[RMDB]
RNA sequence: GGGAACGACUCGAGUAGAGUCGAAAAAGUAAUCCCUGCUGAAACAUGGUUUUCACCCUUCCUUUCCACGCAGGGGUAAUCCCAGUAAAACAUGGGUUUUCACCCUUCCUUUCGGGUUUUCACCCUUCCUUUCUUCGGGUUUCCUUCCUCUGCUUGCACGUGAUAAGACGUUCGCGUCUUAUCACGUAAAAGAAACAACAACAACAAC
Reactivity to 2A3 in 0.01 (KOAc 150mM, MgCl2 10mM, bicine 150mM(pH8.5), 24C), signal-to-noise 1, nucleotides 027 to 156: a000g130u110a030a000u030c000c000c000u020g050c020u060g040a080a060a020c040a080u110g040g000u060u090u160u160c100a190c030c000c040u000u060c000c020u000u100u070c040c040a050c050g030c060a010g000g010g010g020u000a000a040u010c000c000c000a000g080u080a020a150a050a010c150a080u110g000g010g000u040u030u100u080c140a080c000c000c000u010u020c030c030u070u180u170c060g000g000g000u050u020u020u040c050a080c000c000c000u000u090c060c010u180u110u080c020u070u080c040g000g000g000u060u020u010c000c000u060u000c020c010u070c000u040g010c040u010u060g010c100